[RMDB]
RNA sequence: GGGAACGACUCGAGUAGAGUCGAAAAAUGAUGCAAAAAGAAGUGGGCGAACGCUUAAAUGCUGAAGUAGGUUCAAAAGCAUAUGGUUCAUUAUCAAUUGUCGUACAAUACUAUACAGAGACUAGUAUCUCUUAUCGGGAUUCGUCCCGAUAAGAGAAAAAGAAACAACAACAACAAC
Reactivity to DMS in 0.01 (KOAc 150mM, MgCl2 10mM, bicine 150mM(pH8.5), 24C), signal-to-noise 3, nucleotides 027 to 126: a000u030g000a060u030g020c050a040a010a100a160a040g000a040a040g010u000g030g000g020c030g010a050a140c080g000c040u030u000a090a040a040u000g060c020u030g010a100a080g020u020a100g010g070u010u010c110a040a020a050a050g000c030a040u010a160u050g030g000u000u000c170a050u010u000a050u020c080a020a120u030u000g010u030c060g000u000a130c080a030a030u000a090c070u000a040u020a130c100a130g000a080g010a070c070u000a030g040u010a050
Reactivity to 2A3 in 0.01 (KOAc 150mM, MgCl2 10mM, bicine 150mM(pH8.5), 24C), signal-to-noise 3, nucleotides 027 to 126: a030u260g010a060u100g030c060a050a040a000a010a110g090a030a030g020u070g010g010g000c030g040a070a040c040g020c020u050u090a000a080a120u060g010c010u000g010a040a060g050u140a000g050g100u070u110c040a040a090a080a080g060c060a060u060a120u140g040g000u010u060c010a030u030u120a150u170c020a080a130u010u030g010u000c020g030u000a090c020a000a070u050a030c030u040a000u020a140c070a040g100a000g020a060c020u020a000g070u010a050